[RMDB]
RNA sequence: GGGAACGACUCGAGUAGAGUCGAAAAUUCGUCAACUUGGAGAUGUUGUUACGCAUGGAAAAAAAACUCUCGGAGCGCAUGUCCACAGAGCGCAUGGAAAAUAUAGAGUCCAGGCUGGACGACUUCUAAGAGGGAGGAAGAACGGGAAAGUGAAAAAGACGGUGAAGUUAUUCGUAACUUCACCGUCAAAAGAAACAACAACAACAAC
Reactivity to 2A3 in 0.01 (KOAc 150mM, MgCl2 10mM, bicine 150mM(pH8.5), 24C), signal-to-noise 2, nucleotides 027 to 156: u120u040c020g000u050c020a030a020c010u040u070g020g000a040g010a050u060g000u020u030g000u060u040a050c010g020c060a090u120g050g030a090a000a000a000a000a040a090a090c040u000c000u030c040g060g070a050g050c060g000c080a050u100g010u080c070c010a070c110a080g060a020g060c040g000c000a020u040g090g010a070a070a060a040u210a050u080a030g020a000g010u000c010c010a000g030g000c050u040g030g010a010c010g010a030c000u050u060c000u060a070a000g030a070g010g030g000a030g010g020a020a000g020a020a010c000g000g000g000a010a010a010g050u080g110a080a080a000a020a060